This 177-nucleotide RNA was probed chemically with 2A3 and DMS. For 2A3, 2,293 sequencing reads were counted. Values cover nucleotides 27 to 126. 2A3 adducts were read by reverse transcription with SuperScript II with manganese. For DMS the reverse transcriptase was MarathonRT. The reactions ran in a buffer of 150 mM KOAc, 10 mM MgCl2 and 150 mM bicine (pH 8.5), at 24 C.

RNA sequence: GGGAACGACUCGAGUAGAGUCGAAAAGUGUAGUUACUGUUUCGUCGGCUUAACCGCCGAUCCACUACAUGCAAGGGGCAGCCGGGCUGUGAGGCAGCUGCCAGGAUGGUCCUGCCCUUGUCCCGGCAUCCUCCGCUGAAUUCGUUCAGCGGAGGAUAAAAGAAACAACAACAACAAC
Reactivity to 2A3 in 0.01 (KOAc 150mM, MgCl2 10mM, bicine 150mM(pH8.5), 24C), signal-to-noise 4, nucleotides 027 to 126: g010u010g010u010a030g000u060u130a120c100u120g010u000u040u040c010g000u000c010g000g020c010u050u100a020a020c020c020g010c000c000g000a000u000c000c020a020c010u030a000c000a010u060g070c040a050a090g020g010g050g000c020a050g010c020c050g050g010g000c020u030g040u030g090a170g030g060c010a010g030c110u170g000c000c000a020g130g090a090u210g020g040u070c010c010u020g000c000c000c000u020u020g020u070c010c000c020g020g010c010
Reactivity to DMS in 0.01 (KOAc 150mM, MgCl2 10mM, bicine 150mM(pH8.5), 24C), signal-to-noise 2, nucleotides 027 to 126: g010u010g000u020a030g010u050u010a030c170u020g020u000u000u000c070g010u000c000g010g000c010u020u000a070a180c280c260g020c000c000g000a000u000c070c110a030c040u020a030c000a010u000g000c120a030a100g000g000g020g030c260a100g040c080c000g000g000g000c010u000g000u080g000a160g000g030c010a030g030c040u040g000c030c000a060g010g000a080u050g000g000u040c300c030u000g040c000c010c000u000u030g000u000c010c000c000g010g040c040